[RMDB]
RNA sequence: GGGAACGACUCGAGUAGAGUCGAAAAUCAAACUUAUUUUUGAUGGUUCGCAGAGCUUGGUUAGUUGCUUGCAACGCCUCGCCGAGCACAGGUGUCCCUCCUAUUGCACUAUCUGGAGGUGACGCCGAUUCUCAUUGUACUUCGGUACAAUGAGAAUAAAAGAAACAACAACAACAAC
Reactivity to 2A3 in 0.01 (KOAc 150mM, MgCl2 10mM, bicine 150mM(pH8.5), 24C), signal-to-noise 9, nucleotides 027 to 126: u030c010a020a020a040c110u250u210a120u190u260u050u040u050g050a040u060g050g080u150u140c060g000c050a010g000a000g060c010u010u010g010g010u050u120a070g010u030u110g020c040u070u150g040c040a030a010c020g010c000c000u000c010g000c000c000g010a000g000c020a000c040a050g000g000u000g000u000c010c000c000u010c010c000u050a100u080u230g140c150a100c160u160a140u190c110u060g000g010a010g000g040u140g000a000c000g000c000c010g000
Reactivity to DMS in 0.01 (KOAc 150mM, MgCl2 10mM, bicine 150mM(pH8.5), 24C), signal-to-noise 8, nucleotides 027 to 126: u010c020a020a020a060c300u020u020a130u010u010u000u000u000g000a030u000g000g010u010u020c110g000c030a050g000a210g000c010u000u010g010g010u000u020a140g020u010u000g000c020u020u000g020c030a030a030c020g000c010c010u000c070g020c010c000g010a300g000c030a120c210a070g010g010u000g000u000c000c000c000u000c000c010u000a090u010u010g010c220a090c180u010a040u010c160u000g000g010a010g000g010u010g010a010c010g010c000c010g000